This 177-nucleotide RNA was probed chemically with DMS and 2A3. Source: RMDB library M2PK50, as collected in RNAgym. The reactions ran in a buffer of 150 mM KOAc, 10 mM MgCl2 and 150 mM bicine (pH 8.5), at 24 C. Values cover nucleotides 27 to 126. DMS adducts were read by reverse transcription with MarathonRT.
[RMDB]
RNA sequence: GGGAACGACUCGAGUAGAGUCGAAAAUCUUAGCGUUUCGACGCUAAGAAAAGGUGGUGGAGGAGGUGGAAAGCUCGGCAUUAAAGGGAUAAAAACAUCUUCAUAUAGGGUCGUUCGCGACCCUAAACAGCGAGUAUUUAUUCGUAAAUACUCGCUGAAAAGAAACAACAACAACAAC
Reactivity to DMS in 0.01 (KOAc 150mM, MgCl2 10mM, bicine 150mM(pH8.5), 24C), signal-to-noise 3, nucleotides 027 to 126: u010c000u000u000a010g020c000g000u000u000u010c180g010a020c020g000c000u000a000a020g000a020a040a070a100g000g010u000g000g020u000g010g000a080g000g000a090g010g010u000g000g000a040a070a100g000c100u010c090g020g000c070a090u000u000a030a090a100g000g000g050a120u020a020a060a110a090a070c120a070u000c060u000u020c080a070u000a180u010a000g010g000g000u000c000g010u000u000c220g010c020g000a010c010c000c010u000a000a060a110
Reactivity to 2A3 in 0.01 (KOAc 150mM, MgCl2 10mM, bicine 150mM(pH8.5), 24C), signal-to-noise 2, nucleotides 027 to 126: u020c000u000u000a000g010c010g000u020u000u080c190g140a020c000g030c000u020a000a010g010a000a000a020a000g030g010u060g000g050u100g040g140a150g040g020a070g030g110u090g000g050a050a020a000g010c030u030c090g060g030c010a020u070u150a100a070a020g040g000g010a030u080a090a160a000a010a010c060a130u070c020u140u090c070a030u110a020u070a160g010g000g000u010c000g020u000u000c050g020c010g020a010c030c000c030u010a010a000a010